[RMDB]
RNA sequence: GGGAACGACUCGAGUAGAGUCGAAAACUGCCAGUAUUAGCUAAUUUAGAGUUUGUGAUAGCCAACGGUUUAAUCACUCCGAUACCAGAGUUGGCUGCUGUGGCAGCUAAAUCACCUGUAGGAUCAAUACUCUUGCCUUCUUCGGAAGGCAAGAGUAAAAAGAAACAACAACAACAAC
Reactivity to 2A3 in 0.01 (KOAc 150mM, MgCl2 10mM, bicine 150mM(pH8.5), 24C), signal-to-noise 2, nucleotides 027 to 126: c000u020g050c000c000a040g060u090a200u130u130a030g100c040u100a080a040u170u170u160a270g050a090g100u040u090u130g010u070g120a130u030a010g020c000c000a070a030c020g010g070u000u070u190a060a020u000c000a010c060u160c120c190g010a000u090a190c030c020a010g040a000g220u000u000g010g010c000u000g000c060u000g000u080g040g000c000a000g020c010u060a150a090a000u090c070a120c100c000u080g040u150a040g000g170a040u010c070a070a000
Reactivity to DMS in 0.01 (KOAc 150mM, MgCl2 10mM, bicine 150mM(pH8.5), 24C), signal-to-noise 1, nucleotides 027 to 126: c000u000g000c010c010a080g000u020a080u010u000a030g010c000u000a050a150u000u020u000a060g020a110g000u030u060u060g000u010g000a090u010a080g040c010c000a100a150c170g080g020u000u000u040a150a030u000c000a020c050u030c220c100g000a100u000a020c040c060a190g010a040g000u000u000g020g060c000u010g000c050u030g050u000g000g010c000a030g000c040u010a010a100a110u030c100a110c010c000u000g000u020a040g000g000a040u000c080a000a110
The record gives the reactivity of an RNA of 177 nucleotides to 2A3 and DMS.
DMS adducts were read by reverse transcription with MarathonRT.
Source: RMDB library OK1LIB, as collected in RNAgym.
The reactions ran in a buffer of 150 mM KOAc, 10 mM MgCl2 and 150 mM bicine (pH 8.5), at 24 C.
For 2A3, 567 sequencing reads were counted.
High 2A3 reactivity points to a flexible backbone, as in loops and unpaired stretches.
Values cover nucleotides 27 to 126.